[RMDB]
RNA sequence: GGGAACGACUCGAGUAGAGUCGAAAAGAUAUGGAUUGGGAGAGCUUUGAUCACACUCAGCUCGGAAACGAGCUGAGGUGUGGGAGCUUUAACAAUCCUAAGUCAAAUCGCCAGUUCGCUGGCGAAAGUCCUUGAUAAUGUUCGCAUUAUCAAGGACAAAAGAAACAACAACAACAAC
Reactivity to 2A3 in 0.01 (KOAc 150mM, MgCl2 10mM, bicine 150mM(pH8.5), 24C), signal-to-noise 4, nucleotides 027 to 126: g040a010u090a040u150g000g000a000u000u020g000g060g030a070g010a000g020c020u280u200u120g150a150u240c000a000c000a030c020u020c000a010g000c000u010c000g020g010a040a050a020c010g000a000g000c010u000g010a030g030g000u020g000u000g000g030g010a000g000c000u000u040u010a010a000c010a000a000u000c000c000u010a100a010g060u020c020a010a040a200u050c000g010c000c010a010g020u090u110c300g040c180u010g000g030c010g010a040a000a000
Reactivity to DMS in 0.01 (KOAc 150mM, MgCl2 10mM, bicine 150mM(pH8.5), 24C), signal-to-noise 4, nucleotides 027 to 126: g020a030u000a300u000g010g000a020u010u000g000g000g020a090g000a010g000c010u010u010u010g010a120u000c010a000c000a050c000u000c000a020g000c010u000c000g000g010a100a090a240c010g000a000g010c010u000g010a000g010g010u000g010u010g000g000g000a010g020c000u000u000u000a120a110c030a010a030u000c000c000u000a020a110g000u000c040a080a180a210u010c010g000c000c000a010g030u000u010c260g040c000u020g000g000c000g010a010a050a100
Source: RMDB library TTRDES, as collected in RNAgym.
Chemical mapping of a 177-nucleotide RNA with 2A3 and DMS.
The RNA was probed in 150 mM KOAc, 10 mM MgCl2 and 150 mM bicine (pH 8.5) at 24 C.
For DMS the reverse transcriptase was MarathonRT.
Reactivities are rounded to 0.1 and cut off at 0 and 3.